[RMDB]
RNA sequence: GGGAACGACUCGAGUAGAGUCGAAAAUCCAACGUGGGCCCACGUGGUUCCCUCAGUAGCUGCCGUCAAUAGCUACAUAUUUUGAACUGAAUGCAAGCGCAAAAUGAGACGGUGAAAAAUGCGAAAAAUAAUGAUUAGGGUUCGCCCUAAUCAUUAUAAAAGAAACAACAACAACAAC
Reactivity to 2A3 in 0.01 (KOAc 150mM, MgCl2 10mM, bicine 150mM(pH8.5), 24C), signal-to-noise 4, nucleotides 027 to 126: u010c000c000a050a080c030g010u040g040g100g150c140c290c000a020c020g010u030g000g030u010u020c000c000c010u050c050a030g000u030a010g000c010u040g010c010c010g040u020c010a030a180u060a140g000c020u010a010c020a020u130a070u020u160u030u050g110a080a050c040u050g050a100a040u100g060c110a110a070g030c020g000c060a040a110a070a010u020g000a020g000a050c000g000g010u010g040a040a070a010a020a020u150g020c040g050a040a020a020a000
Reactivity to DMS in 0.01 (KOAc 150mM, MgCl2 10mM, bicine 150mM(pH8.5), 24C), signal-to-noise 6, nucleotides 027 to 126: u010c010c010a040a060c020g050u000g000g010g030c230c190c010a050c020g020u000g010g000u000u000c000c000c000u010c210a100g010u000a050g010c000u000g010c020c020g020u000c030a150a140u010a080g010c020u000a050c030a110u010a040u000u000u000u010g000a080a090c130u000g010a090a070u010g010c150a100a070g030c220g010c060a020a020a070a080u000g000a170g010a020c010g010g010u010g000a030a070a080a070a100u000g010c040g000a020a080a060a120